[RMDB]
Chemical mapping of a 177-nucleotide RNA with DMS. Values cover nucleotides 27 to 126. For DMS, 1,844 sequencing reads were counted. DMS adducts were read by reverse transcription with MarathonRT. Conditions: 150 mM KOAc, 10 mM MgCl2 and 150 mM bicine (pH 8.5), 24 C.

RNA sequence: GGGAACGACUCGAGUAGAGUCGAAAAAUUGCCGUUUAGUUCUUUGCCCCCUAUUUUAUGGUUGGUCACAACAUCCGAAGCGGAAAGUAGGUAUAAUAGUAUUUAUAGUAUUAGUGCCAAAGCUACACCUAAACACUUCAUUCGUGAAGUGUUUAGGAAAAGAAACAACAACAACAAC
Reactivity to DMS in 0.01 (KOAc 150mM, MgCl2 10mM, bicine 150mM(pH8.5), 24C), signal-to-noise 2, nucleotides 027 to 126: a150u010u000g020c010c030g020u010u010u000a080g000u000u010c050u000u000u010g000c050c030c060c030c010u000a050u010u010u000u000a100u000g020g020u000u000g010g000u000c120a070c140a090a050c050a100u020c020c020g010a080a130g020c080g000g000a070a060a060g010u010a040g000g000u010a060u010a050a060u010a070g010u000a040u000u000u000a080u020a120g000u000a020u000u000a040g010u010g010c040c020a030a090a130g010c070u000a050c180a170